[RMDB]
RNA sequence: GGGAACGACUCGAGUAGAGUCGAAAACUCGAUUGAAUCAACAGUUGAUGAUCUAGAACGCGGUGAAUCUGUAUACGAUUCUAGUUCAUUGUGGUUUAAUACAACCCAAGAUCCAACUUUGGUAAUCGUAGGUAUCAUAGGUAUCGUGAUUUUGUCGACUAAUGUCAUUGUUCGCAAUGACAUUAGUAAAAGAAACAACAACAACAAC
Reactivity to DMS in 0.01 (KOAc 150mM, MgCl2 10mM, bicine 150mM(pH8.5), 24C), signal-to-noise 5, nucleotides 027 to 156: c030u000c050g010a090u000u000g000a070a050u000c020a030a130c070a060g040u000u000g030a080u000g010a020u000c010u000a070g010a030a040c040g020c090g040g000u000g020a080a090u000c090u000g030u000a110u010a060c060g010a110u000u000c010u000a030g020u000u000c010a110u000u010g030u000g020g010u000u000u010a110a210u010a140c080a060a040c000c000c010a060a300g000a040u010c010c010a020a020c020u000u000u000g010g010u000a030a040u000c070g030u010a140g010g010u000a030u000c030a130u010a140g030g020u000a030u000c050g010u000g010a140u000u000u000u010g010u000c070g010
Reactivity to 2A3 in 0.01 (KOAc 150mM, MgCl2 10mM, bicine 150mM(pH8.5), 24C), signal-to-noise 9, nucleotides 027 to 156: c020u020c010g010a020u010u110g160a050a080u030c010a020a050c060a090g010u010u030g050a160u050g000a000u000c010u040a070g010a020a010c040g070c160g300g040u110g060a040a030u030c020u050g150u210a110u080a210c100g010a020u010u000c010u030a010g010u000u000c030a040u070u090g080u260g030g080u030u030u070a180a140u210a130c090a040a010c000c000c000a020a020g020a010u000c010c000a000a010c000u030u010u020g020g000u050a030a000u010c020g060u070a040g040g030u060a040u080c060a110u090a140g060g060u100a060u150c090g050u050g150a150u030u080u060u160g060u050c040g010